Source: RMDB library M2RFPK, as collected in RNAgym.
Structure probing data (DMS and 2A3) for a 207-nucleotide construct.
The DMS profile rests on 3,640 reads.
RNA sequence: GGGAACGACUCGAGUAGAGUCGAAAAGUCCAAAAUCGAUUCGGCGGCCCUGUCAUGAGGCCGAAACGAAGGCACGUACCCCUUCGAAUGGCGUCGGGGAGUCAGCGGCUAUAUAUGCGCCUAAUGCUAAAGUCGUGCUGGUUCGCCAGCACGACAACAUGUUAAUUGUCUUCGGACAAUUAACAUGAAAAGAAACAACAACAACAAC
Reactivity to DMS in 0.01 (KOAc 150mM, MgCl2 10mM, bicine 150mM(pH8.5), 24C), signal-to-noise 2, nucleotides 027 to 156: g000u000c030c030a070a050a090a110u000c030g010a170u000u000c000g000g010c020g020g000c010c000c000u010g000u010c210a120u000g020a050g010g000c000c000g000a010a030a160c030g010a070a050g000g010c080a100c080g040u010a230c020c100c000c000u010u010c020g000a090a140u000g010g020c050g000u010c090g000g000g010g000a110g000u000c030a110g000c040g000g040c000u000a090u010a090u000a090u010g010c020g030c040c010u000a110a100u030g010c000u010a100a130a160g020u000c000g040u000g000c000u000g010g000u010u000c260g000c030c000a000g000c000a020c010g000a000c000a020a050
Reactivity to 2A3 in 0.01 (KOAc 150mM, MgCl2 10mM, bicine 150mM(pH8.5), 24C), signal-to-noise 2, nucleotides 027 to 156: g070u030c010c000a040a000a000a130u170c080g030a050u070u040c040g030g020c010g020g030c020c000c010u050g080u100c110a120u120g030a030g060g000c000c010g010a030a000a000c010g020a010a000g010g040c060a010c170g090u150a070c010c000c000c010u030u040c040g080a130a120u110g050g010c040g070u040c010g000g000g050g020a030g070u060c010a000g040c050g060g000c020u010a020u000a020u010a020u290g080c000g000c030c020u090a090a040u080g050c070u090a110a050a080g000u000c000g010u000g000c000u010g000g030u010u040c130g040c050c000a000g000c000a000c000g010a000c000a000a000